Structure probing data (2A3 and DMS) for a 177-nucleotide construct. It was measured as part of the RMDB library OK1LIB. Conditions: 150 mM KOAc, 10 mM MgCl2 and 150 mM bicine (pH 8.5), 24 C. For 2A3, 431 sequencing reads were counted. 2A3 adducts were read by reverse transcription with SuperScript II with manganese.
[RMDB]
RNA sequence: GGGAACGACUCGAGUAGAGUCGAAAAAUAUGAACAAUUGAUGAAACGCAUAGAACAAGCGGAAGUAAGAAUGGAAGAAAUUGAUGUGCUCAUGAUUGAGGCAAGUGCAGAUUAUGGGAAAAUUAAAGAGGCUCUCAUAAUUCGUUAUGAGAGCCUCAAAAGAAACAACAACAACAAC
Reactivity to 2A3 in 0.01 (KOAc 150mM, MgCl2 10mM, bicine 150mM(pH8.5), 24C), signal-to-noise 1, nucleotides 027 to 126: a000u300a000u170g000a080a100c000a040a300u000u150g090a100u000g000a070a020a010c000g000c200a000u000a150g040a150a000c020a120a120g000c000g000g000a020a000g000u000a220a000g000a000a070u100g040g210a090a000g000a000a220a300u070u070g020a240u150g240u170g020c000u000c000a000u020g020a050u050u050g000a000g150g130c000a070a080g170u100g170c010a000g000a120u000u000a090u040g000g000g000a010a010a020a020u300u300a200a000a000
Reactivity to DMS in 0.01 (KOAc 150mM, MgCl2 10mM, bicine 150mM(pH8.5), 24C), signal-to-noise 1, nucleotides 027 to 126: a120u000a070u040g010a150a040c060a030a130u090u000g000a050u110g060a040a180a180c160g000c000a020u050a180g000a110a100c160a050a200g000c080g040g000a050a040g050u000a080a190g000a110a050u030g000g000a060a020g000a020a070a120u000u010g030a060u040g030u000g060c020u000c090a000u000g000a130u030u000g000a000g000g000c090a150a090g050u040g000c020a020g010a030u000u000a030u000g000g000g020a000a070a060a220u000u100a040a060a010